[RMDB]
RNA sequence: GGGAACGACUCGAGUAGAGUCGAAAAAUUUCCUGUCCUGGGAAGGUACGGGUAAUCUUAUUAAUACCAGUCGUGUUAGGGAUAGUUCUUUGGAAUUGUGGAUCUUGAACGAGGAAUUUCUAGUAAGUGCAAGUCAUCAGCUUGCGUUGAUUAUGUCGCAUAUACCAUACUUCGGUAUGGUAUAUGCAAAAGAAACAACAACAACAAC
Reactivity to DMS in 0.01 (KOAc 150mM, MgCl2 10mM, bicine 150mM(pH8.5), 24C), signal-to-noise 4, nucleotides 027 to 156: a080u000u010u000c000c010u010g010u000c030c000u010g010g000g000a150a060g010g020u000a030c020g000g010g010u000a030a060u000c050u000u010a090u010u000a060a060u010a060c020c020a180g020u000c080g020u000g010u000u000a060g010g000g010a070u000a070g010u000u000c020u000u000u000g020g010a060a100u000u000g020u010g000g020a060u000c030u000u010g020a060a080c050g000a070g030g020a070a090u000u000u000c020u000a100g010u000a040a070g030u000g020c020a020a040g020u000c060a130u000c150a160g010c010u000u010g020c040g020u010u000g000a090u000u000a130u010g010u000c090
Reactivity to 2A3 in 0.01 (KOAc 150mM, MgCl2 10mM, bicine 150mM(pH8.5), 24C), signal-to-noise 6, nucleotides 027 to 156: a010u050u020u050c000c000u010g040u040c010c030u050g010g030g070a100a040g040g000u100a030c040g000g000g020u030a040a050u030c070u080u150a120u130u160a120a040u040a100c060c040a050g070u070c040g030u060g050u100u080a050g000g020g050a040u050a060g040u090u020c050u090u070u080g050g040a070a050u030u050g030u060g040g030a030u030c020u030u060g040a050a030c040g000a030g030g020a030a070u050u070u040c030u030a070g050u090a120a060g050u040g060c010a020a000g010u060c040a120u030c030a170g020c000u010u010g010c020g010u000u020g040a160u030u140a100u180g080u050c040
Source: RMDB library PDB130, as collected in RNAgym. Structure probing data (DMS and 2A3) for a 207-nucleotide construct. For DMS, 11,386 sequencing reads were counted. The 2A3 profile rests on 3,692 reads.